RNA sequence: GGGAACGACUCGAGUAGAGUCGAAAAACAUAUUACGAUAUGAUUCAGAUGGUGUCUUACUGGUUCGUACCAAGGGUCAUAAUGGUUUCUUGUUUCCAACCAAAGAACAAGUGGCGAGCCUGAAUAAAAAACUGACUGCCGUUCGCGGCAGUCAGAAUCAAUUGUACGGCUUCGGCCGUACAAUUGAAAAAGAAACAACAACAACAAC
Reactivity to 2A3 in 0.01 (KOAc 150mM, MgCl2 10mM, bicine 150mM(pH8.5), 24C), signal-to-noise 1, nucleotides 027 to 156: a000c030a020u210a040u160u220a150c100g040a040u040a000u120g050a100u020u180c060a120g060a130u050g020g050u020g000u070c030u130u030a110c080u100g120g000u060u050c090g000u100a000c010c020a060a050g030g010g030u000c010a020u080a220a070u140g000g020u040u030u000c000u010u010g040u000u030u000c030c030a090a150c030c000a090a030a000g040a020a010c010a020a000g000u010g060g050c000g000a000g000c020c020u000g040a020a030u190a140a140a060a000a000a000c000u000g000a000c000u000g000c030c030g030u040u050c280g030c050g110g000c020a000g000u000c000a000g000a000a000